RNA sequence: GGGAACGACUCGAGUAGAGUCGAAAAGUCUCACGAGUGCAGAGACAAAGGUAGUUGACUCCGGAGCUACCAGUACUCGAACGAAUGCGAAAGAGUUCAAGUAUUCCAACCGGAGAAGAACUCAAAACCGUAGCAUUAGGUUCGCCUAAUGCUACGGAAAAGAAACAACAACAACAAC
Reactivity to 2A3 in 0.01 (KOAc 150mM, MgCl2 10mM, bicine 150mM(pH8.5), 24C), signal-to-noise 4, nucleotides 027 to 126: g000u010c000u010c020a060c070g130a120g170u240g100c100a060g010a000g020a090c030a070a030a000g000g000u000a000g000u010u080g040a090c010u010c000c000g000g000a000g010c020u000a000c000c000a000g020u000a000c010u000c010g000a020a000c000g070a110a040u190g160c080g090a170a080a050g100a040g000u000u010c000a020a000g000u010a090u040u110c050c050a090a090c020c000g000g020a000g000a000a030g030a020a030c040u050c060a000a060a020a060
Reactivity to DMS in 0.01 (KOAc 150mM, MgCl2 10mM, bicine 150mM(pH8.5), 24C), signal-to-noise 2, nucleotides 027 to 126: g000u000c000u010c010a250c030g070a170g050u000g000c100a110g000a010g020a000c070a000a160a040g050g000u000a010g020u000u000g000a120c000u000c010c000g000g000a060g010c000u010a050c000c000a140g040u000a010c010u000c000g050a000a000c010g000a300a300u000g010c300g000a050a050a040g000a300g000u000u000c000a020a010g000u000a020u020u000c060c050a280a090c000c000g030g020a060g000a150a150g000a050a040c020u000c050a040a140a110a060